Annotation: Source: RMDB library OK1LIB, as collected in RNAgym. Structure probing data (DMS and 2A3) for a 177-nucleotide construct. For DMS the reverse transcriptase was MarathonRT. The DMS profile rests on 7,430 reads.

RNA sequence: GGGAACGACUCGAGUAGAGUCGAAAAGACGCCCCGUUCCCUGACAUCACAGACCGUAUCACCGGGAGCGUAGGCCGCUUCACUUAUGUUGUGAAAUACGCCCGUGAGAACGGAAUGACAGUGGGCGACGAUUAUAGGCUUUCGAGCCUAUAAUCGUAAAAGAAACAACAACAACAAC
Reactivity to DMS in 0.01 (KOAc 150mM, MgCl2 10mM, bicine 150mM(pH8.5), 24C), signal-to-noise 5, nucleotides 027 to 126: g000a070c170g000c010c000c000c020g010u000u000c000c000c000u020g010a150c140a100u020c090a110c050a080g000a150c020c010g030u010a090u000c020a020c070c110g030g000g030a080g030c030g000u000a020g000g000c300c050g020c030u010u000c000a090c240u040u040a140u020g010u020u040g010u000g010a060a300a090u010a010c000g000c010c000c000g010u000g000a030g000a060a020c030g000g010a090a120u000g020a050c160a080g010u020g010g000g000c070g000
Reactivity to 2A3 in 0.01 (KOAc 150mM, MgCl2 10mM, bicine 150mM(pH8.5), 24C), signal-to-noise 7, nucleotides 027 to 126: g100a030c050g050c000c010c000c010g030u020u030c010c030c000u030g080a060c020a100u080c040a050c030a070g120a080c010c010g010u010a020u030c010a030c070c130g080g030g040a070g100c010g000u000a000g010g060c040c010g020c030u040u020c040a120c150u210u170a140u300g070u070u030g010u020g010a030a020a010u030a010c000g010c000c010c000g020u020g000a020g030a090a030c010g000g070a030a020u040g040a020c040a040g050u150g000g030g000c020g000
Source information:
Reactivities are given for positions 27 through 126. The reactions ran in a buffer of 150 mM KOAc, 10 mM MgCl2 and 150 mM bicine (pH 8.5), at 24 C.